RNA sequence: GGGAACGACUCGAGUAGAGUCGAAAACUUUUCUCGAUCUCCUAGCUUGAUCUUUUGAUCUCUCAAAUCGAUCUUAAGAAAAAGAUCAGUCAAAGAGAUGAGAGUAGAUGUCUGUAGAUCUCGGACCCGAGAGUAAGCAGUUCGCUGCUUACUCUCGAAAAGAAACAACAACAACAAC
Reactivity to 2A3 in 0.01 (KOAc 150mM, MgCl2 10mM, bicine 150mM(pH8.5), 24C), signal-to-noise 7, nucleotides 027 to 126: c000u050u050u070u010c010u000c020g110a020u010c000u000c020c010u010a020g000c010u050u160g010a010u020c000u020u030u020u050g030a030u010c030u000c010u050c150a090a140a130u160c080g010a000u010c000u090u210a160a100g070a110a090a030a000a000g000a000u000c000a010g070u070c050a080a030a000g010a000g010a020u020g020a020g010a000g020u050a030g020a090u100g030u030c060u050g060u050a040g020a210u020c030u020c070g030g040a060c010c010
Reactivity to DMS in 0.01 (KOAc 150mM, MgCl2 10mM, bicine 150mM(pH8.5), 24C), signal-to-noise 6, nucleotides 027 to 126: c050u000u010u010u000c000u000c010g010a050u000c000u000c000c010u000a300g010c000u010u010g010a020u010c000u000u000u010u000g020a010u010c010u010c220u060c300a110a130a150u040c210g000a020u010c010u000u010a110a090g030a110a050a020a000a000g010a000u010c000a010g000u020c020a050a140a300g010a010g010a030u010g000a040g000a010g030u020a050g010a050u010g000u000c060u020g010u000a030g010a030u010c030u000c010g000g000a300c150c100